[RMDB]
Background:
Chemical mapping of a 177-nucleotide RNA with 2A3. 2A3 adducts were read by reverse transcription with SuperScript II with manganese.

RNA sequence: GGGAACGACUCGAGUAGAGUCGAAAAUUGCGAUGCGGUAAUUGUCUUCGUAAACCGUUUUUGUGCUGCAAAUGUUGUUAUGAUCACGUUAUGGAAACGGAGCAUAAGAAUGUUCUCAGCAUUAAUCCCAGCGCUGUUAUUUCGAUAACAGCGCUGGAAAAGAAACAACAACAACAAC
Reactivity to 2A3 in 0.01 (KOAc 150mM, MgCl2 10mM, bicine 150mM(pH8.5), 24C), signal-to-noise 1, nucleotides 027 to 126: u090u040g000c060g000a010u020g040c040g080g130u210a120a200u180u250g030u070c020u020u020c030g020u000a110a060a060c000c010g010u040u000u000u070u160g010u020g020c010u000g040c000a050a000a000u000g050u000u000g180u000u090a000u000g020a010u010c020a080c300g000u000u020a150u300g270g110a080a010a000c000g050g020a000g000c000a000u000a000a000g080a000a010u000g020u000u000c020u000c050a010g070c000a000u080u060a070a090u110c000